[RMDB]
RNA sequence: GGGAACGACUCGAGUAGAGUCGAAAAUGCAGUCUUCGAUGACGACUUGGUAGACGCCUGCGUAGGAGGAGUCUGGGAUGACUGCGAGGGUAUCUUGUUCCUGAUCGUCCUUGUUCCACAUGUGGCACCACGAUCACUCAUUCGUGAGUGAUCGUGGAAAAGAAACAACAACAACAAC
Reactivity to DMS in 0.01 (KOAc 150mM, MgCl2 10mM, bicine 150mM(pH8.5), 24C), signal-to-noise 1, nucleotides 027 to 126: u000g010c000a070g000u000c020u000u000c050g000a290u010g010a020c070g000a230c050u000u000g010g020u010a120g010a100c100g010c020c070u000g010c060g040u010a100g010g000a030g000g010a290g000u000c010u010g010g000g000a030u010g000a030c020u000g000c000g000a090g000g000g020u000a040u000c060u000u000g040u000u000c010c000u010g000a050u010c110g010u020c020c030u010u010g000u020u010c030c040a090c140a040u000g020u000g000g000c100a220
Reactivity to 2A3 in 0.01 (KOAc 150mM, MgCl2 10mM, bicine 150mM(pH8.5), 24C), signal-to-noise 2, nucleotides 027 to 126: u170g000c000a000g010u020c020u000u000c030g080a090u060g010a010c020g010a020c010u050u030g120g000u080a080g040a300c090g050c010c090u090g000c140g090u110a080g030g140a010g000g020a000g000u010c000u030g030g040g020a030u060g000a030c010u010g010c030g000a020g030g000g000u130a080u110c030u020u050g040u060u080c010c010u050g010a090u070c100g070u040c020c030u080u090g060u030u020c040c020a060c030a160u140g000u140g130g000c020a020